[RMDB]
RNA sequence: GGGAACGACUCGAGUAGAGUCGAAAACGCACUCGCAGCUUAAUAACCUGCGCUGAGCCCUUCUCCCCCAGCUUGCCUGUGUCCUAGGGAAUUGGUAGGUCAUCCUUCACAGGAUCGUGUGGAAGUCAUUACUCGUGAGUGUUCGCACUCACGAGAAGAUGAAGGACAUGUUCGCAUGUCCUUCAUCAAAAGAAACAACAACAACAAC
Reactivity to DMS in 0.01 (KOAc 150mM, MgCl2 10mM, bicine 150mM(pH8.5), 24C), signal-to-noise 1, nucleotides 027 to 156: c080g030c050a170c040u000c000g000c000a020g000c000u030u000a130a140u010a150a060c210c000u000g010c020g010c150u030g040a090g000c040c020c040u010u000c070u000c010c000c000c010c010a070g020c060u020u000g020c010c010u000g050u000g000u000c040c070u020a120g020g030g030a100a070u000u000g000g020u000a100g000g010u000c040a090u000c000c030u010u010c130a130c130a130g010g020a030u000c120g060u000g000u000g000g000a070a210g020u000c040a080u020u000a210c020u010c000g000u030g000a060g040u010g000u000u000c270g040c030a020c000u000c000a030c000g000a010g010a000a040
Reactivity to 2A3 in 0.01 (KOAc 150mM, MgCl2 10mM, bicine 150mM(pH8.5), 24C), signal-to-noise 2, nucleotides 027 to 156: c000g000c000a040c020u000c000g000c030a000g000c030u040u030a000a000u050a050a030c000c030u050g030c010g010c250u100g030a100g020c000c000c060u090u070c090u050c010c000c000c000c000a000g000c040u000u110g030c000c000u000g040u010g010u080c010c050u090a070g010g070g000a040a080u060u010g150g000u020a090g010g040u060c000a020u030c020c000u070u080c020a050c000a050g060g020a060u090c070g010u060g030u040g060g040a060a020g030u070c070a110u000u120a010c000u000c010g060u000g000a010g000u010g050u000u010c050g110c100a000c010u000c000a000c000g000a000g010a010a010
This 207-nucleotide RNA was probed chemically with DMS and 2A3. The RNA was probed in 150 mM KOAc, 10 mM MgCl2 and 150 mM bicine (pH 8.5) at 24 C. Source: RMDB library M2RFPK, as collected in RNAgym. For DMS the reverse transcriptase was MarathonRT. In probing experiments dimethyl sulfate is read out at A N1 and C N3, which are open when not base-paired.